[RMDB]
RNA sequence: GGGAACGACUCGAGUAGAGUCGAAAAUUGAACGGAUUCGUCCGUUCAACGCGUGCGAUCCAAACGUAGUACAAAAGUACAGACGAUAGCACAAGGAUCAAAUGAUACAGCCGUUCGCGGCUGUAAAAGAUUAAUACUCUUUCGAGAGUAUUAAUCUAAAAGAAACAACAACAACAAC
Reactivity to DMS in 0.01 (KOAc 150mM, MgCl2 10mM, bicine 150mM(pH8.5), 24C), signal-to-noise 7, nucleotides 027 to 126: u000u000g000a010a010c000g020g010a040u000u020c200g020u000c000c000g020u000u000c000a010a010c140g010c150g010u000g010c100g000a030u000c010c020a060a110a210c050g010u000a080g010u000a010c020a100a080a110a160g000u000a000c000a080g000a100c050g010a110u010a050g000c050a040c060a140a140g000g000a040u000c050a080a080a070u020g000a220u000a010c000a000g010c010c000g020u000u010c190g030c020g010g010c000u000g000u000a000a030a110
Reactivity to 2A3 in 0.01 (KOAc 150mM, MgCl2 10mM, bicine 150mM(pH8.5), 24C), signal-to-noise 6, nucleotides 027 to 126: u010u010g000a000a000c000g000g020a010u040u060c180g060u000c020c000g000u000u010c000a000a010c030g030c030g030u050g010c040g010a020u020c020c000a080a030a030c040g030u040a020g000u010a040c020a060a300a090a050g020u010a010c020a060g170a060c030g060a110u120a060g050c040a030c040a110a080g030g000a030u060c030a010a090a090u150g040a030u020a050c020a000g000c020c010g000u040u090c230g010c020g120g000c010u010g000u010a000a010a010